[RMDB]
The record gives the reactivity of an RNA of 177 nucleotides to 2A3 and DMS. The reactions ran in a buffer of 150 mM KOAc, 10 mM MgCl2 and 150 mM bicine (pH 8.5), at 24 C. Reactivities are given for positions 27 through 126.

RNA sequence: GGGAACGACUCGAGUAGAGUCGAAAAGUACACUAUGACUCGAUGCAGUACGUACUCUAGCUACGUACGGAUCGAUCCUAUAGGAUCGAUCUCUAGGUCCAUGCCAUGCAUGCGAUCUGAGUACAUCGCAACUUUUGCCUUUCGAGGCAAAAGUUGCAAAAGAAACAACAACAACAAC
Reactivity to 2A3 in 0.01 (KOAc 150mM, MgCl2 10mM, bicine 150mM(pH8.5), 24C), signal-to-noise 2, nucleotides 027 to 126: g000u070a020c050a060c090u140a060u270g050a030c030u010c030g030a050u080g070c020a030g000u000a000c010g000u010a020c010u060c140u160a070g020c050u020a000c000g030u000a010c000g000g000a000u000c000g020a000u000c000c000u300a300u250a300g000g000a000u000c000g000a000u000c000u040c010u050a020g020g020u040c060c020a010u060g010c000c100a090u230g030c000a000u000g060c040g030a000u040c040u070g040a000g020u010a030c000a100u090c070
Reactivity to DMS in 0.01 (KOAc 150mM, MgCl2 10mM, bicine 150mM(pH8.5), 24C), signal-to-noise 1, nucleotides 027 to 126: g020u000a060c090a130c170u010a030u010g040a060c160u000c030g010a020u010g000c050a060g060u000a030c010g000u000a010c030u000c260u000a100g010c080u000a000c010g010u000a010c000g000g000a000u000c000g030a010u000c000c010u000a100u020a050g020g000a000u000c000g040a000u000c000u000c020u000a020g030g000u000c060c070a030u000g000c010c300a200u010g000c000a000u000g000c110g030a010u000c000u000g010a140g010u000a030c000a050u010c090